[RMDB]
RNA sequence: GGGAACGACUCGAGUAGAGUCGAAAACCGUAGGCUCGUGUGGUACAGACAUGAUUCAAGUGCUUCGAAAGAGGCACGAAGAUCAACAGCUGUACGUAACAUCACGAGCCUAAACGGAAAAGACAAUGUUGACAUCUUCGGAUGUCAACAUUGUCAAUCUUGUGUUAUGCUUCGGCAUAACACAAGAAAAAGAAACAACAACAACAAC
Reactivity to 2A3 in 0.01 (KOAc 150mM, MgCl2 10mM, bicine 150mM(pH8.5), 24C), signal-to-noise 2, nucleotides 027 to 156: c000c000g010u000a000g000g010c000u000c000g000u000g030u030g030g010u010a000c000a030g120a020c060a110u060g010a040u130u070c060a140a020g000u000g010c000u000u010c030g080a130a100a080g000a010g010g020c000a000c000g000a010a010g020a000u000c000a030a050c030a090g020c000u010g000u000a000c010g030u030a040a020c030a030u210c020a000c000g000a000g000c000c000u000a000a000a000c000g080g030a170a060a000a030g010a000c000a000a000u000g000u000u000g020a000c000a010u000c020u050u090c300g110g000a000u000g000u000c010a000a000c000a000u000u000g000u000c000a000a000
Reactivity to DMS in 0.01 (KOAc 150mM, MgCl2 10mM, bicine 150mM(pH8.5), 24C), signal-to-noise 2, nucleotides 027 to 156: c010c000g040u000a030g010g020c000u000c020g100u000g040u000g010g000u010a050c010a030g020a060c100a300u000g020a020u010u000c030a050a300g000u010g040c010u000u000c070g000a160a210a200g010a010g000g000c000a010c030g050a110a030g000a000u000c010a040a050c060a210g050c020u000g000u000a020c050g050u000a120a090c070a120u000c000a010c040g000a030g020c030c010u010a000a000a040c000g020g000a100a130a160a270g000a010c010a030a010u000g010u000u010g000a020c010a000u000c000u000u050c300g040g000a060u000g010u000c000a000a010c000a000u000u000g020u010c010a030a010